[RMDB]
Overview: The data come from the RNA Mapping Database (RMDB), library RFM100. Structure probing data (2A3) for a 177-nucleotide construct. Values cover nucleotides 27 to 126. Conditions: 150 mM KOAc, 10 mM MgCl2 and 150 mM bicine (pH 8.5), 24 C.

RNA sequence: GGGAACGACUCGAGUAGAGUCGAAAAACUCCAUCAUACGUGAUGGAGAAGGGUCUUGGGGGGCGUCCCCAAGAGGAUUGUUCUGAUGGCCGGGCCGCCAUCUGAGCUCCUGCUACGGCAGGAGCAAGUUACGCCCCUUGUUCGCAAGGGGCGUAACAAAAGAAACAACAACAACAAC
Reactivity to 2A3 in 0.01 (KOAc 150mM, MgCl2 10mM, bicine 150mM(pH8.5), 24C), signal-to-noise 1, nucleotides 027 to 126: a020c000u020c010c010a000u000c000a000u050a150c300g130u030g000a000u000g000g010a000g000a000a030g020g010g000u010c050u000u000g000g000g020g030g040g180c090g160u300c000c030c000c000a000a000g010a010g030g090a160u140u240g070u150u020c020u020g020a010u000g000g000c000c000g000g030g000c000c000g000c000c000a000u000c020u030g040a010g000c000u000c000c010u000g000c000u000a050c140g140g000c000a000g010g020a000g010c010a000a020